[RMDB]
Source information:
Conditions: 150 mM KOAc, 10 mM MgCl2 and 150 mM bicine (pH 8.5), 24 C. This 177-nucleotide RNA was probed chemically with 2A3 and DMS. DMS adducts were read by reverse transcription with MarathonRT. It was measured as part of the RMDB library OK2TRN. The 2A3 profile rests on 1,050 reads. Reactivities are given for positions 27 through 126.

RNA sequence: GGGAACGACUCGAGUAGAGUCGAAAAGAUGAAAAUUUAAUGCGUUGAUGUGCCGUAUCUAUAAAAAGAAUAUGAUAUUGAUUGUGACUUGUAUCAUCGCCAUGACGUAUACAAAUUGAUUUUUGUACACUACCACGCCAUUCGUGGCGUGGUAGUGAAAAGAAACAACAACAACAAC
Reactivity to 2A3 in 0.01 (KOAc 150mM, MgCl2 10mM, bicine 150mM(pH8.5), 24C), signal-to-noise 2, nucleotides 027 to 126: g070a030u100g080a020a020a080a020u080u070u050a020a000u020g000c030g010u020u030g290a050u000g090u120g010c040c000g100u060a090u010c040u050a100u100a110a260a050a030a050g080a060a040u080a020u160g010a010u020a080u130u100g050a090u060u220g100u090g120a110c070u110u160g020u080a010u040c000a000u060c010g000c050c010a010u040g010a010c020g050u010a060u010a060c120a000a010a030u030u030g010a020u020u030u020u010u040g060u030a000
Reactivity to DMS in 0.01 (KOAc 150mM, MgCl2 10mM, bicine 150mM(pH8.5), 24C), signal-to-noise 2, nucleotides 027 to 126: g030a080u000g010a110a040a000a000u010u000u000a160a050u020g000c040g000u010u000g000a050u000g000u020g040c010c110g030u010a040u000c020u000a070u000a040a050a160a090a060g000a040a080u000a030u000g000a050u000a020u010u000g000a100u020u000g000u020g080a080c170u000u000g020u010a080u000c000a030u000c110g000c010c020a030u000g000a040c050g050u000a020u000a070c210a030a020a030u000u000g000a130u000u000u000u000u000g020u000a090